[RMDB]
RNA sequence: GGGAACGACUCGAGUAGAGUCGAAAAGCGCCCCUUUUCGAAGGGGCGCACUGGAAAUAAAGCCGAAAGGGUAGGCAUUCCUUAUUUGGCGAAAGCCUGCCACUAUUGAGAUCUUCGGAUCUCAAAAUUACCUGUCAAUAUUCGUAUUGACAGGUAAAAAAGAAACAACAACAACAAC
Reactivity to 2A3 in 0.01 (KOAc 150mM, MgCl2 10mM, bicine 150mM(pH8.5), 24C), signal-to-noise 4, nucleotides 027 to 126: g000c010g000c000c000c010c020u020u040u020u090c170g100a010a000g000g020g030g000c020g000c000a000c000u010g030g080a010a080a090u150a110a090a020g070c030c040g070a140a060a010g070g000g000u020a010g020g000c020a010u010u040c010c000u090u150a300u210u200u240g060g020c090g010a030a000a000g010c000c000u010g000c000c010a100c050u080a190u050u070g000a000g010a000u000c010u010u060c240g120g010a000u000c010u000c000a000a010a000a020
Reactivity to DMS in 0.01 (KOAc 150mM, MgCl2 10mM, bicine 150mM(pH8.5), 24C), signal-to-noise 3, nucleotides 027 to 126: g000c020g030c000c000c000c000u000u000u000u020c120g010a030a010g010g000g000g010c010g020c000a000c030u000g010g010a060a070a090u010a050a110a150g000c030c010g010a120a110a080g030g010g030u000a020g010g000c020a130u000u000c010c010u000u010a140u010u000u010g000g020c100g010a050a080a060g000c000c010u000g010c000c010a090c120u010a100u000u000g010a020g000a010u010c000u000u010c180g020g000a000u010c010u000c010a000a020a050a110
Source: RMDB library M2PK50, as collected in RNAgym. Structure probing data (2A3 and DMS) for a 177-nucleotide construct. The RNA was probed in 150 mM KOAc, 10 mM MgCl2 and 150 mM bicine (pH 8.5) at 24 C. 2A3 adducts were read by reverse transcription with SuperScript II with manganese. DMS adducts were read by reverse transcription with MarathonRT.